[RMDB]
RNA sequence: GGGAACGACUCGAGUAGAGUCGAAAAGAGGAUCAUCAGAUCUAGGUACUCAUCUAGACGUACCUAGACGUACCAGCACCAUGUAGCGAUCGUACCUCGACAGUAGUGAUCCGAUCGAGUACGUACACAUGUAGAUUAAUUUCGAUUAAUCUACAUGAAAAGAAACAACAACAACAAC
Reactivity to DMS in 0.01 (KOAc 150mM, MgCl2 10mM, bicine 150mM(pH8.5), 24C), signal-to-noise 9, nucleotides 027 to 126: g010a140g010g010a030u000c020a040u010c150a130g010a170u000c000u000a010g010g010u000a000c010u000c040a210u010c240u010a100g010a050c280g020u000a000c010c000u000a010g010a010c080g010u010a070c090c080a110g000c110a140c060c060a100u010g020u010a060g010c100g000a090u000c030g010u000a030c110c040u000c030g000a050c140a080g010u000a090g010u000g000a030u000c010c010g010a130u000c010g000a040g010u000a020c020g010u000a120c200a190
Reactivity to 2A3 in 0.01 (KOAc 150mM, MgCl2 10mM, bicine 150mM(pH8.5), 24C), signal-to-noise 9, nucleotides 027 to 126: g100a030g010g010a020u030c010a010u040c050a050g070a180u000c010u000a000g000g000u000a000c000u010c060a200u110c180u200a090g020a080c090g020u000a000c000c000u000a000g000a000c010g010u030a060c020c050a030g050c040a050c050c020a090u180g100u180a050g100c070g060a070u080c020g010u010a020c010c060u010c010g030a030c040a060g130u220a010g020u030g040a050u000c010c020g010a030u020c010g000a010g030u020a020c020g020u050a020c070a000
An RNA of 177 nucleotides, treated with DMS and 2A3 and read out base by base. The RNA was probed in 150 mM KOAc, 10 mM MgCl2 and 150 mM bicine (pH 8.5) at 24 C.